Chemical mapping of a 177-nucleotide RNA with DMS and 2A3. For DMS the reverse transcriptase was MarathonRT. The DMS profile rests on 3,801 reads. The data come from the RNA Mapping Database (RMDB), library M2PK50.

RNA sequence: GGGAACGACUCGAGUAGAGUCGAAAAGCAACUCGGUUCGCCGAGUUGCAAAUAAAAUCAGCGGUAAAUUCGAGGCGUAAAUUACCGCUGAACGCCUCGUUAAAAGUCUUCAGUUCGCUGAAGACAACGAAAUUUAAUUGUUCGCAAUUAAAUUUCGAAAAGAAACAACAACAACAAC
Reactivity to DMS in 0.01 (KOAc 150mM, MgCl2 10mM, bicine 150mM(pH8.5), 24C), signal-to-noise 3, nucleotides 027 to 126: g010c010a010a010c000u010c000g000g000u000u020c220g030c020c000g010a020g010u000u000g010c000a010a040a030u000a050a060a110a100u000c000a010g020c000g010g000u000a020a020a110u000u010c030g010a150g010g020c100g010u010a040a030a050u000u000a030c010c000g000c000u010g000a000a050c140g010c020c010u000c170g010u000u020a050a070a090a130g000u000c000u000u000c020a010g000u000u010c200g010c020u000g000a010a000g000a010c010a020a070
Reactivity to 2A3 in 0.01 (KOAc 150mM, MgCl2 10mM, bicine 150mM(pH8.5), 24C), signal-to-noise 3, nucleotides 027 to 126: g020c000a000a000c000u000c000g010g060u040u110c190g020c090c000g000a000g000u010u000g000c000a000a000a000u020a000a000a000a050u040c000a010g020c000g040g020u050a050a060a120u120u100c050g050a100g180g050c050g040u060a030a090a030u070u030a030c000c000g000c000u000g000a000a000c000g020c000c000u010c030g020u020u120a060a150a060a050g000u010c020u000u000c010a010g050u020u070c130g030c080u000g000a000a000g010a010c000a000a000